[RMDB]
RNA sequence: GGGAACGACUCGAGUAGAGUCGAAAACGGGGUAGCCAGCUCGAGCAGCUCAAAAUCGGUAUGUUCAGUCAUGAGCGCCGCUCUCCCAACGCAUCGCUUCGCUCGGCCGGCGCAGUCAUGACACGUCCCAACCGUCGUGAUUCGUCACGACGGUUGGAAAAGAAACAACAACAACAAC
Reactivity to 2A3 in 0.01 (KOAc 150mM, MgCl2 10mM, bicine 150mM(pH8.5), 24C), signal-to-noise 3, nucleotides 027 to 126: c020g000g010g000g040u030a010g040c020c030a000g000c010u040c050g010a000g020c040a020g000c020u050c090a050a060a060a140u130c090g050g010u130a140u170g140u110u110c030a040g060u020c020a030u020g030a000g000c010g010c000c000g030c020u000c020u000c050c020c000a010a110c040g010c130a100u120c090g000c030u110u060c010g000c020u010c010g030g010c000c000g000g000c020g000c000a020g120u070c000a010u030g000a010c010a010c100g170u040c010
Reactivity to DMS in 0.01 (KOAc 150mM, MgCl2 10mM, bicine 150mM(pH8.5), 24C), signal-to-noise 1, nucleotides 027 to 126: c110g000g000g060g000u090a000g000c060c060a100g020c000u000c160g060a060g000c180a110g010c020u020c090a070a010a010a110u140c110g010g010u000a120u000g050u000u030c080a240g020u000c160a080u000g000a140g060c020g000c000c060g020c070u000c070u000c060c000c060a210a070c090g000c050a010u030c020g010c070u000u000c020g000c040u000c140g010g000c060c010g000g000c010g060c020a200g030u000c010a000u040g000a020c010a270c040g000u030c180
Chemical mapping of a 177-nucleotide RNA with 2A3 and DMS.
Values are in units of 0.01, from 0 to 300, in steps of 10.
Source: RMDB library OK1LIB, as collected in RNAgym.
The RNA was probed in 150 mM KOAc, 10 mM MgCl2 and 150 mM bicine (pH 8.5) at 24 C.